The data come from the RNA Mapping Database (RMDB), library TTRDES. An RNA of 177 nucleotides, treated with 2A3 and DMS and read out base by base. Reactivities are rounded to 0.1 and cut off at 0 and 3. For DMS the reverse transcriptase was MarathonRT.
RNA sequence: GGGAACGACUCGAGUAGAGUCGAAAAGAUAUGGAUCAUGGCCAGGCGAGGAUCUGGCCGUUCGGAAACGAACGCCAGGGAGCCUGGUGAUCCUAAGUCAAACCGAGUCCGGUUCGCCGGACUCGGAUCAUAACGUCCACUUCGGUGGACGUUAUGAAAAAGAAACAACAACAACAAC
Reactivity to 2A3 in 0.01 (KOAc 150mM, MgCl2 10mM, bicine 150mM(pH8.5), 24C), signal-to-noise 1, nucleotides 027 to 126: g020a010u030a010u110g000g010a010u000c040a040u110g300g130c240c020a030g000g000c000g130a300g090g000a050u010c010u020g010g040c110c030g010u000u010c010g010g010a030a010a010c010g000a000a010c020g010c000c000a000g010g000g000a010g000c010c030u030g000g000u010g000a000u000c010c010u000a040a010g020u010c040a080a030a180c000c000g000a010g000u080c020c010g010g100u080u100c300g040c060c000g010g000a000c010u030c000g010g000a000
Reactivity to DMS in 0.01 (KOAc 150mM, MgCl2 10mM, bicine 150mM(pH8.5), 24C), signal-to-noise 2, nucleotides 027 to 126: g000a000u010a300u010g000g000a010u000c010a190u000g070g040c160c020a030g010g010c000g020a100g020g020a010u010c000u000g000g000c120c120g010u000u000c010g010g000a060a110a210c010g010a000a010c010g000c010c000a010g000g010g000a040g010c010c000u020g000g000u000g000a020u000c000c000u000a030a120g020u010c010a120a120a190c050c000g000a030g000u000c000c000g010g000u010u020c300g020c000c000g000g000a000c010u000c000g000g000a010